Chemical mapping of a 177-nucleotide RNA with DMS and 2A3. The DMS profile rests on 1,595 reads. For DMS the reverse transcriptase was MarathonRT. For 2A3 the reverse transcriptase was SuperScript II with manganese. The data come from the RNA Mapping Database (RMDB), library 15KREP. For 2A3, 1,597 sequencing reads were counted. Values cover nucleotides 27 to 126.

RNA sequence: GGGAACGACUCGAGUAGAGUCGAAAAUAAUUUCAGAACAGAGGUUGAUCCCGACCUAUCUGCUUUCUAUGUUAAGGAUGGUAAAUACUUUACAAGUGAACCACCCGUAACAUAUUCACCAGCUACAGAUAAGACUGAUGUUCGCAUCAGUCUUAUCAAAAGAAACAACAACAACAAC
Reactivity to DMS in 0.01 (KOAc 150mM, MgCl2 10mM, bicine 150mM(pH8.5), 24C), signal-to-noise 2, nucleotides 027 to 126: u000a090a070u000u010u020c140a110g010a040a060c100a030g010a020g010g010u000u000g000a240u000c030c000c000g000a010c000c010u010a150u000c020u000g010c220u000u000u010c100u020a040u020g010u000u000a020a020g020g000a020u020g000g000u000a080a050a100u000a020c010u000u000u020a180c200a100a040g000u000g000a240a010c000c000a000c000c000c010g010u010a000a010c000a000u000a020u010u000c100a100c130c110a020g010c120u000a080c200a120
Reactivity to 2A3 in 0.01 (KOAc 150mM, MgCl2 10mM, bicine 150mM(pH8.5), 24C), signal-to-noise 2, nucleotides 027 to 126: u070a000a080u060u150u150c030a030g020a060a010c010a020g090a030g090g040u020u020g010a140u020c030c000c000g000a000c000c000u040a100u030c000u020g000c020u040u150u050c040u020a020u000g000u000u020a030a020g010g000a020u010g020g010u020a140a170a120u100a070c020u060u060u090a090c100a140a040g000u020g030a040a010c010c000a000c000c000c000g000u000a000a000c000a020u020a060u090u130c050a060c150c030a050g080c040u070a050c060a080